Chemical mapping of a 207-nucleotide RNA with 2A3.
For 2A3, 376 sequencing reads were counted.
Reactivities are rounded to 0.1 and cut off at 0 and 3.
[RMDB]
RNA sequence: GGGAACGACUCGAGUAGAGUCGAAAAUAACCCCUAUACUUGUAUAGGCGAUUAAUUAAUCUUCUGUAAAUGCUGUAAGAGGAUUACCCCUUGAGGUUUCAGCACUAGGCUGCUCUAGCGAUUAAUCACAACGAUUUGGUCUUCGGACCAAAUCGAACAUGUUCAAGCUCUUCGGAGCUUGAACAUGAAAAGAAACAACAACAACAAC
Reactivity to 2A3 in 0.01 (KOAc 150mM, MgCl2 10mM, bicine 150mM(pH8.5), 24C), signal-to-noise 1, nucleotides 027 to 156: u050a010a000c000c000c000c010u020a010u040a100c110u080u260g040u040a040u000a000g050g030c030g100a150u000u170a120a000u050u000a000a010u040c000u000u010c000u090g140u230a040a180a140u170g010c040u100g070u220a060a000g000a000g040g020a010u010u020a010c010c030c040c060u050u060g010a040g180g000u120u160u300c090a010g010c000a020c020u100a040g200g000c010u070g040c010u100c040u120a010g000c010g050a020u050u140a110a030u070c040a040c030a260a100c020g010a000u010u000u000g010g000u000c000u010u060c140g140g000a000c000c000a000a000a000u000c000g000a010a000